[RMDB]
This 177-nucleotide RNA was probed chemically with DMS and 2A3. The reactions ran in a buffer of 150 mM KOAc, 10 mM MgCl2 and 150 mM bicine (pH 8.5), at 24 C.

RNA sequence: GGGAACGACUCGAGUAGAGUCGAAAACACGCGCCGGAUUAUUGCGGGAAGACAUGCGUCUUAAAACUCCUGUGGUGCGGGACACGCUGCUUUUGAGGUGUCAGAGAAUAGCAUGAUAAUCAGGCAACGACCUAUCCUGGUUCGCCAGGAUAGGUCGAAAAGAAACAACAACAACAAC
Reactivity to DMS in 0.01 (KOAc 150mM, MgCl2 10mM, bicine 150mM(pH8.5), 24C), signal-to-noise 1, nucleotides 027 to 126: c000a120c180g000c120g000c000c020g010g000a010u000u050a000u000u010g030c000g030g000g060a140a020g000a160c000a110u000g000c130g000u000c030u000u040a000a130a070a010c070u000c000c000u000g000u000g000g000u000g020c000g000g000g000a120c070a120c000g000c050u000g000c200u000u020u020u000g000a020g010g000u000g000u040c000a200g000a070g040a100a150u000a150g040c010a090u110g000a050u120a000a110u000c110a040g000g050c000a120a300
Reactivity to 2A3 in 0.01 (KOAc 150mM, MgCl2 10mM, bicine 150mM(pH8.5), 24C), signal-to-noise 4, nucleotides 027 to 126: c090a000c040g070c010g000c000c030g040g000a010u030u010a030u050u160g020c040g060g000g030a030a020g040a030c020a030u160g060c110g050u010c000u020u150a100a080a040a040c090u060c050c000u000g090u080g050g120u050g010c020g060g050g020a030c070a000c080g120c010u140g030c020u190u220u130u250g160a030g000g060u020g010u030c020a020g010a000g000a160a050u060a070g000c030a000u060g010a020u080a070a000u040c010a000g000g000c000a010a000
For 2A3, 1,784 sequencing reads were counted.